[RMDB]
RNA sequence: GGGAACGACUCGAGUAGAGUCGAAAACUUUUCUCUGAUAAAGAGGAGACCGCUGGACUCGCCGCCCCAGCCCGGGUAAGCCACAGUUCCGACCGAAGGGGACGAGUGGGGAGAAGGGCGCCCCGAGAUGACCGAACGUUCGCGUUCGGUAAAAGAAACAACAACAACAAC
Reactivity to DMS in 0.01 (KOAc 150mM, MgCl2 10mM, bicine 150mM(pH8.5), 24C), signal-to-noise 3, nucleotides 027 to 129: c170u020u050u010u040c010u000c020u000g000a140u060a050a130a070g010a030g000g000a030g020a050c160c110g020c110u000g000g050a040c050u010c100g060c070c030g030c000c000c000c000a110g030c070c050c060g040g020g010u000a040a160g020c000c000a080c140a190g020u040u010c020c050g030a110c010c080g030a000a000g000g040g020g000a050c040g040a070g040u050g010g000g010g050a130g030a120a180g010g010g020c180g020c000c050c010c000g040a110g020a060u020g020
Reactivity to 2A3 in 0.01 (KOAc 150mM, MgCl2 10mM, bicine 150mM(pH8.5), 24C), signal-to-noise 3, nucleotides 027 to 129: c000u060u030u170u020c010u000c010u020g110a140u130a300a120a000g010a030g000g000a000g010a030c020c060g020c040u040g010g010a060c010u020c030g000c000c000g020c000c020c000c030a040g010c000c020c000g010g000g050u050a050a010g000c010c040a030c010a030g000u050u000c010c010g050a040c050c020g050a090a020g000g000g000g010a000c010g020a040g020u070g000g010g000g010a060g010a050a020g010g000g000c030g050c000c000c010c000g020a030g040a160u170g100
Structure probing data (DMS and 2A3) for a 170-nucleotide construct.
The RNA was probed in 150 mM KOAc, 10 mM MgCl2 and 150 mM bicine (pH 8.5) at 24 C.
Reactivities are given for positions 27 through 129.
DMS adducts were read by reverse transcription with MarathonRT.
The 2A3 profile rests on 5,209 reads.